[RMDB]
RNA sequence: GGGAACGACUCGAGUAGAGUCGAAAAUUUAUGCUGUCAUUGUGAUGACCAUGUUGCUGGCACUGAUUCUGGUAUGGUUGGAACGCCGCCCGCAGUUGGCCGUUGAUACACUACUCGGGAUUAUGGCCAUAGCAUAGCAUUUCGAUGCUAUGCUAUGAAAAGAAACAACAACAACAAC
Reactivity to 2A3 in 0.01 (KOAc 150mM, MgCl2 10mM, bicine 150mM(pH8.5), 24C), signal-to-noise 5, nucleotides 027 to 126: u050u050u030a110u090g040c050u050g060u060c030a040u100u130g080u120g180a080u050g030a030c020c020a030u110g050u070u090g070c040u050g020g020c030a020c070u040g020a110u080u010c000u030g040g020u060a070u130g060g000u050u050g040g030a060a010c040g010c020c010g000c010c020c000g060c040a040g030u100u080g040g000c010c020g020u020u040g020a040u040a100c040a010c040u030a020c020u030c000g000g000g040a050u100u050a070u170g040g020c000
Reactivity to DMS in 0.01 (KOAc 150mM, MgCl2 10mM, bicine 150mM(pH8.5), 24C), signal-to-noise 9, nucleotides 027 to 126: u010u010u010a050u010g010c090u010g000u000c030a060u000u010g020u010g010a160u000g000a060c030c060a060u000g010u000u000g010c050u000g010g010c050a090c060u000g010a080u000u000c040u000g010g020u000a050u000g010g010u000u000g010g000a080a080c090g000c090c090g010c030c030c060g010c120a090g010u010u010g010g010c030c040g010u000u000g000a170u010a050c110a080c030u000a020c010u000c010g010g000g000a120u010u000a080u010g000g000c050